Chemical mapping of a 207-nucleotide RNA with DMS and 2A3. It was measured as part of the RMDB library M2RFPK.

RNA sequence: GGGAACGACUCGAGUAGAGUCGAAAAUUACACUGAGAGCAUUUAGCCUGAUUACUCUUUAAAUCAAAUCAGGCAAUAGAGAGUAACUCGAGAGGUGAAAACCCCACAGCAUUCUGAAAUGUAUUUGAAGGCAACGCUACCUUCGGGUAGCGUUGAACAUGCGAUAAUAGUUCGCUAUUAUCGCAUGAAAAGAAACAACAACAACAAC
Reactivity to DMS in 0.01 (KOAc 150mM, MgCl2 10mM, bicine 150mM(pH8.5), 24C), signal-to-noise 2, nucleotides 027 to 156: u000u000a100c070a220c120u000g000a100g000a010g010c030a300u010u000u000a130g000c000c000u000g000a040u000u000a060c030u000c040u000u010u010a050a090a060u000c130a070a110a040u000c030a020g030g010c030a100a050u010a060g000a110g000a100g030u000a080a040c040u000c020g010a090g020a100g020g010u000g000a100a090a140a090c020c000c020c000a110c110a070g030c030a070u000u010c060u000g010a030a100a070u010g000u020a080u000u010u000g010a030a080g020g020c010a010a020c020g020c010u000a010c000c000u010u000c300g050g010g020u000a010g020c010g060u000u000g010a020a080
Reactivity to 2A3 in 0.01 (KOAc 150mM, MgCl2 10mM, bicine 150mM(pH8.5), 24C), signal-to-noise 3, nucleotides 027 to 156: u070u050a020c040a010c010u060g040a020g000a020g080c040a050u040u050u060a030g040c020c000u000g000a000u000u020a040c030u040c080u200u300u110a060a160a100u190c100a020a020a030u010c000a000g000g010c000a000a000u030a010g030a010g000a010g040u080a080a030c010u020c040g050a050g020a040g070g040u020g020a050a000a020a010c020c020c050c030a040c060a030g040c010a060u140u010c040u160g090a100a080a080u100g030u110a150u070u160u170g090a080a030g080g010c000a000a000c000g000c000u000a010c010c000u010u080c100g010g000g000u000a010g000c000g000u000u000g000a000a000